[RMDB]
RNA sequence: GGGAACGACUCGAGUAGAGUCGAAAACUCACGUUCUGCAGGCUAUCACAUGGACAACGUGGAAGCGUGUUCACAAUAUCUAAGUAAAAAAGAGAGAGAAAAGACUAUGACUAACACACAACACAAGAACAUUCUGAAGCACCUUAAGACAGCCAAGCCUCGUAGCCAAUUUCGAUUGGCUACGAGGAAAAGAAACAACAACAACAAC
Reactivity to 2A3 in 0.01 (KOAc 150mM, MgCl2 10mM, bicine 150mM(pH8.5), 24C), signal-to-noise 2, nucleotides 027 to 156: c010u000c000a080c010g040u050u090c000u010g070c030a000g040g020c020u020a020u130c040a030c040a160u110g110g060a070c150a230a010c160g000u040g030g070a000a060g090c040g020u030g020u010u020c000a010c020a120a070u110a040u210c030u060a010a110g020u080a070a110a100a080a030a000g070a000g020a010g030a000g000a070a010a020a050g030a010c060u060a060u140g060a060c020u070a090a000c020a010c010a000c010a120a040c020a060c000a030a010g010a010a010c010a030u020u050c010u060g020a050a000g000c010a060c000c000u030u060a020a000g050a090c020a020g000c000c000a000a070g010
Chemical mapping of a 207-nucleotide RNA with 2A3. Values cover nucleotides 27 to 156. The reactions ran in a buffer of 150 mM KOAc, 10 mM MgCl2 and 150 mM bicine (pH 8.5), at 24 C.